Chemical mapping of a 170-nucleotide RNA with 2A3 and DMS. The RNA was probed in 150 mM KOAc, 10 mM MgCl2 and 150 mM bicine (pH 8.5) at 24 C.
RNA sequence: GGGAACGACUCGAGUAGAGUCGAAAAAUGUUGGUGAUAGUGCGGAAGUUGCAGUUAAAAUGUUUAAAAAAAACUUUUAACGUACCAAUGGAAAAACUCAAAACACCAGUUGCAACUGCAGAAGCUGAUGCUGACAGAUUCGUCUGUCAGAAAAGAAACAACAACAACAAC
Reactivity to 2A3 in 0.01 (KOAc 150mM, MgCl2 10mM, bicine 150mM(pH8.5), 24C), signal-to-noise 6, nucleotides 027 to 129: a000u160g000u030u020g000g020u060g050a090u060a100g090u090g050c030g040g070a050a030g020u060u020g000c030a030g000u000u010a010a000a010a000u200g030u020u070u120a090a080a020a010a010a010a000a000c010u020u020u000u010a010a000c000g020u040a070c030c000a060a050u040g030g090a050a050a020a030a040c070u130c150a060a090a040a040c060a040c010c010a010g020u040u080g000c010a030a020c000u020g000c040a020g020a140a010g020c060u060g020a030u190g020
Reactivity to DMS in 0.01 (KOAc 150mM, MgCl2 10mM, bicine 150mM(pH8.5), 24C), signal-to-noise 9, nucleotides 027 to 129: a060u040g030u000u050g010g000u020g020a100u040a020g030u000g000c100g020g020a200a080g020u040u030g020c010a100g010u000u000a010a010a000a010u090g010u000u010u000a000a000a010a010a020a010a000a000c030u010u000u000u000a020a000c000g010u030a080c280c080a090a040u000g010g030a030a040a030a080a040c090u040c180a050a060a060a060c110a050c030c000a040g010u020u020g000c040a020a020c060u010g000c090a060g020a080a050g020c050u000g010a050u050g000